RNA sequence: GGGAACGACUCGAGUAGAGUCGAAAACUACAUAAAUUCGUUUAUGUAGCAUCGGGGACGCGCAGACUCCCCGUCAGACGGCUCUAGCCUUCCAAGCUCUGCACUCAACAGCUUUCGAGCUGUUGAAGAGUGCUACUCCAUUCGUGGAGUAGCACUCAAAAGAAACAACAACAACAAC
Reactivity to DMS in 0.01 (KOAc 150mM, MgCl2 10mM, bicine 150mM(pH8.5), 24C), signal-to-noise 2, nucleotides 027 to 126: c000u010a020c010a010u000a000a010a020u000u000c190g020u000u000u000a000u000g000u010a000g010c170a050u010c000g000g010g010g000a000c080g010c090g010c020a010g000a040c020u020c000c000c010c020g000u010c130a020g010a050c110g020g010c010u000c240u050a190g010c010c010u000u000c030c300a010a050g010c050u000c030u000g020c010a240c260u000c000a000a000c010a000g010c000u000u000u010c150g000a010g000c000u000g010u000u000g010a020a030
Reactivity to 2A3 in 0.01 (KOAc 150mM, MgCl2 10mM, bicine 150mM(pH8.5), 24C), signal-to-noise 2, nucleotides 027 to 126: c000u000a010c000a000u030a010a020a030u070u050c150g040u010u010u010a020u020g000u000a020g010c020a100u170c010g000g000g000g000a010c040g130c000g030c240a000g000a030c000u000c000c010c020c000g010u010c000a030g000a010c010g000g000c000u080c140u300a070g020c010c010u020u010c010c070a000a020g030c050u000c000u000g020c000a010c020u000c000a010a000c000a000g010c030u150u100u180c200g160a020g000c010u010g000u000u000g000a000a000